Chemical mapping of a 177-nucleotide RNA with DMS and 2A3. For DMS, 1,227 sequencing reads were counted. The data come from the RNA Mapping Database (RMDB), library OK1LIB. Conditions: 150 mM KOAc, 10 mM MgCl2 and 150 mM bicine (pH 8.5), 24 C.
[RMDB]
RNA sequence: GGGAACGACUCGAGUAGAGUCGAAAACGUGAACAUCGCUCUGCUAAGUCCCGUCGUUCUUCCAGUCAGAGCGAGAUUGUAAGCAACCUUAUGCGCAAUGAAGACAUAGAGGGACUUCUCCAUUAAGCAGUAUCCAGUCCUUCGGGACUGGAUACUGAAAAGAAACAACAACAACAAC
Reactivity to DMS in 0.01 (KOAc 150mM, MgCl2 10mM, bicine 150mM(pH8.5), 24C), signal-to-noise 1, nucleotides 027 to 126: c140g000u060g020a100a080c190a130u000c000g000c030u020c000u000g000c100u060a100a100g000u010c050c050c020g000u070c080g060u000u000c000u020u010c020c050a120g050u010c000a020g010a060g000c050g000a070g030a060u020u000g020u000a020a180g010c010a040a140c130c060u080u000a010u010g000c000g020c010a000a090u070g000a020a100g000a140c120a000u060a140g000a080g000g000g000a100c020u000u000c060u010c060c020a000u040u030a020a080g000
Reactivity to 2A3 in 0.01 (KOAc 150mM, MgCl2 10mM, bicine 150mM(pH8.5), 24C), signal-to-noise 3, nucleotides 027 to 126: c040g130u100g090a080a000c010a210u000c000g000c000u000c000u000g000c010u100a080a000g010u030c000c000c000g120u010c010g000u000u030c000u140u030c010c000a070g030u130c000a000g000a000g000c030g000a000g000a010u040u080g000u110a070a070g040c000a000a020c090c060u130u150a040u050g020c000g050c030a000a110u160g010a110a000g050a020c050a040u130a010g060a060g000g040g000a020c000u020u000c020u000c000c010a120u120u140a140a020g050